[RMDB]
RNA sequence: GGGAACGACUCGAGUAGAGUCGAAAAUUUCAGGAUGAGGCGGCAUCAGCCGUCAGGGGAUGCCUUUGCCAAUGGAUAAAUCCAGAAGUGAUACUGACAAUGGCACAACAGAAGAUCAACAGACUCAACCGUUUUAAAUCUUCGGAUUUAAAACGGUAAAAGAAACAACAACAACAAC
Reactivity to 2A3 in 0.01 (KOAc 150mM, MgCl2 10mM, bicine 150mM(pH8.5), 24C), signal-to-noise 1, nucleotides 027 to 126: u020u030u060c060a050g060g000a060u100g050a040g030g040c020g020g020c020a040u020c050a080g150c010c000g030u040c010a010g000g020g020g000a000u020g000c000c000u120u070u090g010c000c030a040a050u060g000g000a110u140a160a140a110u010c030c000a020g060a090a010g060u100g080a040u090a120c030u050g060a020c020a040a060u040g020g000c030a000c040a100a060c040a070g020a160a010g030a120u000c040a010a070c010a040g040a030c040u030c050a020
Reactivity to DMS in 0.01 (KOAc 150mM, MgCl2 10mM, bicine 150mM(pH8.5), 24C), signal-to-noise 3, nucleotides 027 to 126: u000u000u010c040a110g020g020a100u010g000a140g020g000c020g010g030c010a100u010c060a030g040c010c030g000u010c190a050g020g000g010g000a060u000g000c000c000u000u000u010g000c020c050a090a170u010g050g000a110u010a060a100a080u010c000c000a110g010a110a050g010u020g010a060u000a090c070u000g010a050c070a040a080u020g000g000c030a040c030a050a070c100a050g000a060a050g000a050u000c080a040a060c150a070g000a120c100u010c070a160
Structure probing data (2A3 and DMS) for a 177-nucleotide construct. Values cover nucleotides 27 to 126. Source: RMDB library OK2TRN, as collected in RNAgym. For 2A3 the reverse transcriptase was SuperScript II with manganese. The reactions ran in a buffer of 150 mM KOAc, 10 mM MgCl2 and 150 mM bicine (pH 8.5), at 24 C.